[RMDB]
RNA sequence: GGGAACGACUCGAGUAGAGUCGAAAAGAUAUGGAACACCCAGUGCUUUUGACGCCGGUCGGAAACGACCGAAGCGAUAAGCACGGUGUUCCUAAGUCAAAGUCAUCUCCCUUCGGGGAGAUGACAAUCUUAACAUUAGCUUCGGCUAAUGUUAAGAAAAAGAAACAACAACAACAAC
Reactivity to 2A3 in 0.01 (KOAc 150mM, MgCl2 10mM, bicine 150mM(pH8.5), 24C), signal-to-noise 3, nucleotides 027 to 126: g010a010u050a040u110g010g000a000a010c030a010c050c100c180a110g010u000g010c020u120u160u180u230g110a070c010g010c020c000g000g020u000c000g000g030a060a040a030c010g000a000c000c010g000a050a010g000c000g050a070u040a190a010g000c000a000c020g000g000u000g000u000u000c000c000u000a080a010g010u010c050a130a060a010g000u000c000a010u000c000u000c000c010c000u010u050c190g080g000g000g010a000g000a000u000g000a010c010a000a000
Reactivity to DMS in 0.01 (KOAc 150mM, MgCl2 10mM, bicine 150mM(pH8.5), 24C), signal-to-noise 5, nucleotides 027 to 126: g010a030u000a300u010g000g000a020a010c000a010c000c020c300a150g050u000g010c000u000u000u010u010g010a170c050g010c050c000g000g000u000c000g010g000a100a060a120c010g010a010c000c000g010a050a070g010c000g020a070u000a000a010g020c010a020c020g000g010u000g010u000u000c000c000u000a000a040g010u000c030a090a110a130g000u000c000a000u000c000u000c000c000c000u010u000c180g020g000g010g010a010g010a000u000g000a000c000a010a030
Chemical mapping of a 177-nucleotide RNA with 2A3 and DMS. It was measured as part of the RMDB library TTRDEL. Reactivities are rounded to 0.1 and cut off at 0 and 3. The RNA was probed in 150 mM KOAc, 10 mM MgCl2 and 150 mM bicine (pH 8.5) at 24 C. For 2A3 the reverse transcriptase was SuperScript II with manganese.